[RMDB]
This 177-nucleotide RNA was probed chemically with DMS. DMS adducts were read by reverse transcription with MarathonRT. For DMS, 1,791 sequencing reads were counted.
RNA sequence: GGGAACGACUCGAGUAGAGUCGAAAACAGGGUCCCCAGAAAAUAGACUCUGAGGUGGGGGUUUGUGUGCAAGAGAGCUUGGGGGGCAGUGUCAGGAGCGGUCUCAGGAACACUGAUGUGGGCAGGAUGCCCCUAAUACGUUCGCGUAUUAGGGGCAAAAAGAAACAACAACAACAAC
Reactivity to DMS in 0.01 (KOAc 150mM, MgCl2 10mM, bicine 150mM(pH8.5), 24C), signal-to-noise 2, nucleotides 027 to 126: c030a040g000g000g000u010c000c020c020c020a220g000a060a070a070a070u000a080g000a070c040u000c020u000g000a130g020g040u020g000g030g010g010g000u000u000u000g000u010g020u000g000c060a060a110g000a140g010a060g000c060u010u010g010g000g000g010g010g020c050a010g010u000g000u010c070a060g010g000a060g010c140g010g000u010c030u000c030a090g010g000a100a060c070a050c050u000g000a110u010g030u000g010g000g000c050a060g010g010a170